An RNA of 207 nucleotides, treated with 2A3 and read out base by base. Source: RMDB library OK3TST, as collected in RNAgym.

RNA sequence: GGGAACGACUCGAGUAGAGUCGAAAAGAUUGUCGUCCGCAACGAGAAUGGAACUGUUGUCGACCGAAUUCAAGUUCCGAAGAACCAAACCGCGACCAUCGAGAGUGCUCAAACCAACGCAACGGUGACAACGUCAUCGGCUUCAUCAUAACUGAUGGUCUGUUUAGCUGUUCGCAGCUAAACAGACAAAAGAAACAACAACAACAAC
Reactivity to 2A3 in 0.01 (KOAc 150mM, MgCl2 10mM, bicine 150mM(pH8.5), 24C), signal-to-noise 2, nucleotides 027 to 156: g050a040u080u090g010u090c030g030u000c030c040g050c060a050a080c070g020a020g070a190a260u170g000g050a030a140c080u050g050u170u050g060u240c060g010a140c110c030g070a040a040u000u110c060a070a000g000u000u000c000c010g000a040a000g020a020a010c050c030a090a050a040c020c010g000c020g060a020c010c000a040u020c010g030a000g000a020g260u080g040c030u040c040a020a090a110c040c050a040a070c090g000c070a100a080c040g000g050u000g020a000c060a100a100c300g020u010c000a000u010c030g060g000c020u120u050c010a060u000c020a090u060a240a120c090u140g020a010u010g050
2A3 adducts were read by reverse transcription with SuperScript II with manganese. Values are in units of 0.01, from 0 to 300, in steps of 10.